This 177-nucleotide RNA was probed chemically with DMS and 2A3.
Reactivities are given for positions 27 through 126.
RNA sequence: GGGAACGACUCGAGUAGAGUCGAAAAAAGGAGGCCUGCAACUCAUUUCCCCAUUAGACGUUCUGAGAACACGUGCACCAGCUUCCAAGCUUUCUCCCUCCCGAACCGCCCUGAUUAGUGUGUGAAGAAAUAACCAAUCCUUCGGGAUUGGUUAUUUAAAAGAAACAACAACAACAAC
Reactivity to DMS in 0.01 (KOAc 150mM, MgCl2 10mM, bicine 150mM(pH8.5), 24C), signal-to-noise 4, nucleotides 027 to 126: a040a050g000g010a070g020g020c060c040u000g000c050a060a100c020u020c030a070u000u000u020c000c000c000c120a140u020u020a090g010a120c080g010u020u010c060u020g010a120g010a090a080c090a080c100g000u000g000c050a060c030c040a080g010c030u000u030c060c060a050a110g010c050u000u000u000c020u000c020c010c010u000c040c020c000g000a060a100c050c050g010c040c010c010u000g010a100u020u010a060g010u020g020u000g020u000g010a110a090g000
Reactivity to 2A3 in 0.01 (KOAc 150mM, MgCl2 10mM, bicine 150mM(pH8.5), 24C), signal-to-noise 3, nucleotides 027 to 126: a010a000g070g000a030g000g060c030c070u090g030c050a090a040c010u060c010a100u030u070u040c000c000c000c000a090u100u120a040g020a040c030g050u100u010c050u160g070a060g020a150a020c040a020c080g060u040g000c030a040c030c000a030g030c020u050u030c020c040a070a070g030c020u070u050u000c010u050c020c000c020u010c010c010c000g010a040a030c010c000g040c010c000c020u020g060a140u070u150a110g050u020g020u020g020u010g050a020a110g060